[RMDB]
RNA sequence: GGGAACGACUCGAGUAGAGUCGAAAAUUCAACAGGAAAUGACAAUUGUCAAAUGUAAGGGUUUAAAUAAACCUUUCGUGAAGGACAAUGUCAGUUUCGUUGCUGAUGAUUCAGGUACUCCCGUUGUGUAAUUGUUAUAGUUCGCUAUAACAAUUACAAAAGAAACAACAACAACAAC
Reactivity to 2A3 in 0.01 (KOAc 150mM, MgCl2 10mM, bicine 150mM(pH8.5), 24C), signal-to-noise 7, nucleotides 027 to 126: u050u010c010a000a000c010a040g040g020a010a010a010u010g000a010c030a090a290u010u010g000u000c000a030a060a080u050g080u160a020a030g030g020g000u020u030u070a230a300a110u280a040a040a030c000c000u000u010u010c020g010u040g070a110a040g120g000a000c000a010a000u000g000u000c000a010g010u000u010u010c030g020u030u030g030c020u010g010a030u040g020a040u120u040c020a020g060g030u060a070c040u010c000c010c010g030u140u120g080u010
Reactivity to DMS in 0.01 (KOAc 150mM, MgCl2 10mM, bicine 150mM(pH8.5), 24C), signal-to-noise 9, nucleotides 027 to 126: u010u010c010a010a010c010a050g010g010a010a010a020u000g000a010c000a060a080u000u000g010u000c000a060a140a040u000g010u020a010a010g000g000g010u000u000u000a110a130a160u010a050a010a010c000c000u000u000u000c010g010u000g000a140a180g010g000a010c000a000a010u000g000u000c000a010g010u000u000u000c010g010u010u000g020c030u010g000a020u000g000a300u000u000c070a080g010g010u010a070c160u000c000c010c010g010u020u010g010u000